[RMDB]
RNA sequence: GGGAACGACUCGAGUAGAGUCGAAAAGAGUCGAGUUGUUUGGGAAUGCAGCUCAAAGUGGGUGGUAAAUUCCAUCUAGGGCUAAAUAUAAGUGAGAGACCGAUAGCAAACAAGUACCGUGAGGGAAAGUGACUGUAGAUUUCGAUCUACAGUCACUAAAAGAAACAACAACAACAAC
Reactivity to 2A3 in 0.01 (KOAc 150mM, MgCl2 10mM, bicine 150mM(pH8.5), 24C), signal-to-noise 3, nucleotides 027 to 126: g060a000g030u050c020g000a000g000u040u070g020u000u040u090g030g020g070a060a080u110g060c050a010g030c000u000c010a000a000a080g130u110g000g000g000u040g000g000u050a160a140a060u180u050c020c010a000u000c010u020a040g000g020g000c010u020a040a060a000u220a040u070a170a070g070u080g050a020g000a010g000a010c000c020g050a040u060a040g020c030a040a030a090c010a130a000g000u030a080c020c020g040u080g040a060g000g040g000a010a110
Reactivity to DMS in 0.01 (KOAc 150mM, MgCl2 10mM, bicine 150mM(pH8.5), 24C), signal-to-noise 4, nucleotides 027 to 126: g010a070g020u010c040g010a110g030u000u000g010u010u010u000g000g020g020a080a050u000g010c190a040g000c020u010c020a070a050a140g010u000g000g000g030u000g010g000u020a040a060a170u030u030c010c000a010u010c000u000a160g000g000g000c040u010a040a090a080u020a100u020a040a080g010u020g000a060g000a070g000a120c050c000g020a030u020a040g000c050a080a050a070c190a050a070g010u020a110c020c000g010u020g000a120g000g000g010a040a060
Source information:
This 177-nucleotide RNA was probed chemically with 2A3 and DMS. Source: RMDB libraries RFM100 and RFMREP, as collected in RNAgym. For 2A3, 2,530 sequencing reads were counted. DMS adducts were read by reverse transcription with MarathonRT. 2A3 adducts were read by reverse transcription with SuperScript II with manganese.